An RNA of 207 nucleotides, treated with 2A3 and DMS and read out base by base.
Values cover nucleotides 27 to 156.
Conditions: 150 mM KOAc, 10 mM MgCl2 and 150 mM bicine (pH 8.5), 24 C.
[RMDB]
RNA sequence: GGGAACGACUCGAGUAGAGUCGAAAACUACUAGUUCGCUAGUAGAAACUGGGGUCGGACUUUGAUCGAGACAAGCUGAUGACCCUGAAGCCUCCACGGGCAAGGCUUGUUCGGGAGUCCGACGGAGGCACCCUAAUGUAGUCCUUUCGAGGACUAAUAACUAAUGCUACUUCGGUAGCAUUAGUUAAAAAGAAACAACAACAACAAC
Reactivity to 2A3 in 0.01 (KOAc 150mM, MgCl2 10mM, bicine 150mM(pH8.5), 24C), signal-to-noise 3, nucleotides 027 to 156: c000u000a010c000u000a010g050u060u060c230g030c120u000a000g000u000a010g070a100a080a010c080u110g060g000g110g000u000c010g020g030a000c040u090u130u220g170a230u250c070g010a070g030a140c020a000a000g000c000u020g050a100u260g110a300c020c000c000u010g030a050a040g060c000c040u000c040c010a020c060g000g010g000c030a020a020g020g000c000u030u000g060u170u050c020g030g020g000a010g000u000c010c000g030a000c000g000g000a000g010g000c020a020c020c010c020u120a170a040u280g110u150a020g000u020c010c010u090u050u160c260g100a040g000g010a000c000u010a020a020
Reactivity to DMS in 0.01 (KOAc 150mM, MgCl2 10mM, bicine 150mM(pH8.5), 24C), signal-to-noise 1, nucleotides 027 to 156: c010u000a020c020u000a000g010u000u010c250g010c000u000a020g000u000a000g010a070a100a040c070u000g040g040g020g020u010c000g030g020a020c030u000u000u000g030a110u000c130g020a300g010a040c030a010a020g030c010u020g010a230u030g000a170c080c000c000u030g000a040a070g000c020c050u000c020c010a300c300g020g000g030c020a130a270g000g010c000u000u010g040u010u000c040g030g000g000a090g000u000c000c020g030a080c050g000g010a050g060g010c000a130c000c020c010u000a060a100u010g030u000a050g000u010c000c000u010u020u020c150g020a080g000g000a030c010u010a010a110
DMS adducts were read by reverse transcription with MarathonRT. It was measured as part of the RMDB library RNAMAK.